[RMDB]
Source information: Structure probing data (DMS and 2A3) for a 177-nucleotide construct.
RNA sequence: GGGAACGACUCGAGUAGAGUCGAAAAUUGGGACUCUGGCCUGAUUGAGCCUAUCUACGGUCCAAAUGUGCAGAACCAAGAUUACAACAGAAUAACCCAGGAAUUGAUUUGCGGCGCUUAUCAGUUACUGUACGAUAAAAUUCGUUUUAUCGUACAGAAAAGAAACAACAACAACAAC
Reactivity to DMS in 0.01 (KOAc 150mM, MgCl2 10mM, bicine 150mM(pH8.5), 24C), signal-to-noise 7, nucleotides 027 to 126: u000u010g010g000g000a090c090u010c120u000g010g030c010c020u000g010a160u000u000g010a160g010c000c020u010a100u010c130u010a110c180g000g000u000c010c030a030a070a080u000g020u010g000c050a050g000a070a090c030c020a050a050g000a100u010u010a070c110a060a060c080a060g010a090a060u010a080a120c020c010c020a090g000g010a070a040u000u000g000a050u000u000u000g010c040g010g000c120g010c070u000u000a030u000c030a050g010u000u000a130
Reactivity to 2A3 in 0.01 (KOAc 150mM, MgCl2 10mM, bicine 150mM(pH8.5), 24C), signal-to-noise 5, nucleotides 027 to 126: u030u020g020g000g060a050c030u010c070u140g130g070c010c020u100g030a190u040u050g030a030g010c020c000u050a100u050c070u090a050c130g010g000u000c010c000a030a020a050u120g030u060g010c040a020g000a060a030c000c000a050a020g010a050u100u150a050c050a150a000c010a070g120a120a120u060a060a030c000c010c020a020g030g110a040a050u100u070g030a030u050u050u130g120c180g150g040c080g020c070u050u030a040u080c010a030g020u050u090a060

The 2A3 profile rests on 5,632 reads.